[RMDB]
RNA sequence: GGGAACGACUCGAGUAGAGUCGAAAAAUCUGAACUCAUCAAAAGAGCCAAUCAGUUCAUGUUGAGCUUUGCUGAGAAACCUGUAGAGCUGAGCAGAACAGUCUCAACAUUGACAGUGUCUUGGUUAACUAACUAUACAAUUCGUUGUAUAGUUAGUAAAAGAAACAACAACAACAAC
Reactivity to 2A3 in 0.01 (KOAc 150mM, MgCl2 10mM, bicine 150mM(pH8.5), 24C), signal-to-noise 9, nucleotides 027 to 126: a000u040c050u040g040a060a070c040u030c070a120u070c080a170a100a070a070g110a030g010c030c020a020a080u110c020a050g040u080u020c020a020u030g010u000u000g010a010g000c010u070u070u050g010c010u050g040a020g040a110a110a100c030c040u120g110u220a080g020a000g100c020u060g060a010g010c020a000g040a100a080c050a060g260u080c010u000c010a000a030c010a020u050u130g030a030c030a060g120u060g040u160c080u070u050g030g010u040u030a030
Reactivity to DMS in 0.01 (KOAc 150mM, MgCl2 10mM, bicine 150mM(pH8.5), 24C), signal-to-noise 9, nucleotides 027 to 126: a070u020c050u010g010a080a110c050u000c030a050u040c180a090a070a120a090g000a040g000c040c040a050a050u020c050a080g000u020u000c050a020u000g010u010u000g010a020g000c060u010u010u000g010c010u000g000a030g000a070a070a080c140c060u020g010u030a100g010a100g010c020u000g000a040g010c000a020g000a050a100c200a080g000u040c000u000c000a010a020c020a030u000u020g010a020c100a090g010u020g000u010c100u010u010g000g010u020u020a090